This 207-nucleotide RNA was probed chemically with 2A3 and DMS.
The reactions ran in a buffer of 150 mM KOAc, 10 mM MgCl2 and 150 mM bicine (pH 8.5), at 24 C.
For 2A3 the reverse transcriptase was SuperScript II with manganese.
It was measured as part of the RMDB library OK3TST.
RNA sequence: GGGAACGACUCGAGUAGAGUCGAAAAUCACAAUGAGAUACCAUUUACACUCACUAUAAUGGCUAGAAUUAAAAAAAAGAGUGACAAUAUCAAGUGUUGGCCAUGCUGCGGAAUAUCUGGAGCCCAUGUAUAUUGCCACUGGGAAUGUGGAAACAAAAUUUAUACUGCAUUUCGAUGCAGUAUAAAUAAAAGAAACAACAACAACAAC
Reactivity to 2A3 in 0.01 (KOAc 150mM, MgCl2 10mM, bicine 150mM(pH8.5), 24C), signal-to-noise 3, nucleotides 027 to 156: u060c010a010c090a070a130u190g020a040g010a100u100a130c030c020a000u060u100u070a060c100a010c000u050c000a030c040u070a080u070a240a050u060g010g010c020u020a040g040a120a190u210u230a120a060a040a020a020a010a020a040g090a010g020u040g010a010c030a010a070u090a020u150c040a100a050g040u030g030u150u040g050g000c000c020a020u040g030c000u030g050c030g050g040a100a130u080a060u120c030u030g080g020a040g040c020c000c000a010u050g030u020a060u010a010u080u110g020c010c010a020c020u040g010g020g070a060a060u100g010u010g000g000a060a030a010c020a010a080a020
Reactivity to DMS in 0.01 (KOAc 150mM, MgCl2 10mM, bicine 150mM(pH8.5), 24C), signal-to-noise 2, nucleotides 027 to 156: u000c040a050c090a080a100u020g020a130g000a230u010a060c020c050a080u000u010u000a140c080a120c000u000c060a110c060u000a020u000a080a010u000g010g020c040u000a150g020a080a170u010u020a000a000a000a060a050a080a050a200g010a110g000u000g020a030c020a060a050u000a120u000c070a050a070g020u000g030u010u010g020g010c020c030a090u010g000c020u010g010c070g020g000a130a060u010a100u010c050u000g010g000a210g010c020c020c010a020u000g010u000a120u000a030u000u020g010c010c000a070c030u000g050g010g000a040a090u010g010u010g000g010a100a040a060c040a040a030a050